[RMDB]
RNA sequence: GGGAACGACUCGAGUAGAGUCGAAAAACAGUCAGUACGUUGACUGAGGGAAACGGGAGCCGGGCUUGGGACAAGAGCCAUCCCAAGUCCAAGGCCAAGUAGGCUCUAGUGAUGGUACGCCAUCACAAAAACUGGUCUACCUUCGGGUAGACCAGAACAUUCUGAAAAGCUUCGGCUUUUCAGAAUGAAAAGAAACAACAACAACAAC
Reactivity to 2A3 in 0.01 (KOAc 150mM, MgCl2 10mM, bicine 150mM(pH8.5), 24C), signal-to-noise 4, nucleotides 027 to 156: a000c020a010g020u030c010a000g080u200a130c090g090u110u040g010a010c000u020g010a050g010g040g030a090a130a120c130g000g050g040a050g030c030c050g020g010g000c000u000u000g000g000g000a010c010a050a090g010a000g010c000c000a010u020c000c010c010a000a000g010u000c000c010a040a030g010g000c040c010a070a030g060u110a090g060g000c000u010c020u020a050g000u000g000a010u000g010g020u030a020c240g040c050c000a000u020c000a000c010a000a060a010a000a000c000u000g000g000u000c000u000a000c000c010u010u080c160g030g000g010u000a000g000a000c000c000a000g000a000a010
Reactivity to DMS in 0.01 (KOAc 150mM, MgCl2 10mM, bicine 150mM(pH8.5), 24C), signal-to-noise 1, nucleotides 027 to 156: a070c020a030g030u000c000a090g000u000a060c110g000u000u000g000a100c010u000g030a090g000g000g000a040a060a090c130g000g000g040a050g020c100c030g040g000g000c040u020u010g000g000g000a060c020a030a110g000a070g000c000c020a300u000c000c000c000a000a070g000u000c000c000a050a010g020g010c040c020a050a140g060u000a100g000g000c020u000c010u000a230g010u000g020a020u010g000g030u000a120c300g080c040c000a010u000c040a020c000a020a030a100a070a110c020u000g000g010u000c020u020a010c000c020u000u010c300g080g040g000u000a000g010a000c010c000a000g000a060a170
The record gives the reactivity of an RNA of 207 nucleotides to 2A3 and DMS.
2A3 adducts were read by reverse transcription with SuperScript II with manganese.
Reactivities are given for positions 27 through 156.
The DMS profile rests on 2,024 reads.
Conditions: 150 mM KOAc, 10 mM MgCl2 and 150 mM bicine (pH 8.5), 24 C.